[RMDB]
RNA sequence: GGGAACGACUCGAGUAGAGUCGAAAAUUUCGGACGCAGCCGCGUAUGGAAUGAAUGCCUGUAUUCCGCCAUGUUAUCUUGAUGCUGCAGGUGACACUGAUAUGGUCACAGAUUCUGGUGUGACGCUGGUCAGUGUUAUUGGAUUUCCACAUGGGCAGUUACGAGGCAUAUUCGUAUGCCUCGUAACAAAAGAAACAACAACAACAAC
Reactivity to 2A3 in 0.01 (KOAc 150mM, MgCl2 10mM, bicine 150mM(pH8.5), 24C), signal-to-noise 3, nucleotides 027 to 156: u080u050u080c080g030g030a040c070g010c080a010g090c090c080g050c030g060u050a060u080g020g030a040a020u020g030a090a030u080g020c000c000u000g060u060a060u080u000c040c030g050c010c000a030u070g080u110u170a160u140c080u080u150g020a050u110g020c030u040g030c010a020g010g030u030g000a000c000a000c000u010g010a000u070a050u150g020g000u000c000a000c000a040g040a200u170u120c160u300g060g020u030g000u000g020a010c040g110c250u190g040g020u020c000a010g010u000g020u020u000a040u050u070g060g010a000u000u040u000c040c030a060c040a090u060g000g000g040c030a060
Reactivity to DMS in 0.01 (KOAc 150mM, MgCl2 10mM, bicine 150mM(pH8.5), 24C), signal-to-noise 1, nucleotides 027 to 156: u000u000u000c000g000g000a110c070g010c020a230g020c060c080g030c030g080u020a030u000g050g000a060a040u010g000a200a110u000g000c020c010u010g000u010a190u010u000c060c030g030c030c030a010u000g010u000u010a060u020c040u000u040g000a100u000g010c060u000g020c030a080g020g010u000g010a030c030a040c010u000g010a040u000a080u000g020g010u000c000a030c010a060g010a260u000u000c180u000g000g000u010g000u000g000a060c060g000c060u040g030g040u000c000a000g010u000g030u010u000a050u000u020g000g010a280u020u010u000c000c040a040c080a080u000g030g030g080c040a140
Structure probing data (2A3 and DMS) for a 207-nucleotide construct. For 2A3 the reverse transcriptase was SuperScript II with manganese. For 2A3, 1,488 sequencing reads were counted. For DMS, 2,292 sequencing reads were counted.